Structure probing data (DMS and 2A3) for a 177-nucleotide construct. Values cover nucleotides 27 to 126.

RNA sequence: GGGAACGACUCGAGUAGAGUCGAAAAAACGACUACGGUUUACUCCAAAUUCAUUGGCUAGUUGAGGCCAAGAAACACCUGAUUUUUUAAUGCUAAAUUUCUAGCUUAUCUUCAUAGCUUAAUUUCAUAAUCAAUAAGUGUUCGCACUUAUUGAUUAAAAAGAAACAACAACAACAAC
Reactivity to DMS in 0.01 (KOAc 150mM, MgCl2 10mM, bicine 150mM(pH8.5), 24C), signal-to-noise 5, nucleotides 027 to 126: a090a070c100g010a090c110u000a090c140g010g000u000u000u010a080c080u010c020c040a050a100a070u020u010c100a110u000u010g000g000c010u000a080g020u010u010g010a130g000g000c000c010a010a030g000a060a060a100c100a070c100c070u010g010a000u000u010u010u010u020u020a040a090u020g000c020u010a040a090a120u020u010u010c050u000a060g000c030u000u000a040u020c030u010u010c070a070u010a060g010c060u010u000a060a060u010u000u010c070a120
Reactivity to 2A3 in 0.01 (KOAc 150mM, MgCl2 10mM, bicine 150mM(pH8.5), 24C), signal-to-noise 8, nucleotides 027 to 126: a000a000c050g050a010c050u070a030c080g050g000u030u050u040a040c040u030c020c000a040a020a090u110u070c060a070u080u050g010g000c010u030a060g080u070u070g090a060g040g010c000c000a010a000g010a010a040a000c050a040c010c020u060g130a180u040u060u050u040u050u180a100a080u140g020c010u030a070a090a160u100u150u050c030u010a000g000c010u030u060a060u100c050u140u080c060a130u060a050g020c010u080u110a050a030u110u050u040c050a040
The reactions ran in a buffer of 150 mM KOAc, 10 mM MgCl2 and 150 mM bicine (pH 8.5), at 24 C. In probing experiments dimethyl sulfate is read out at A N1 and C N3, which are open when not base-paired.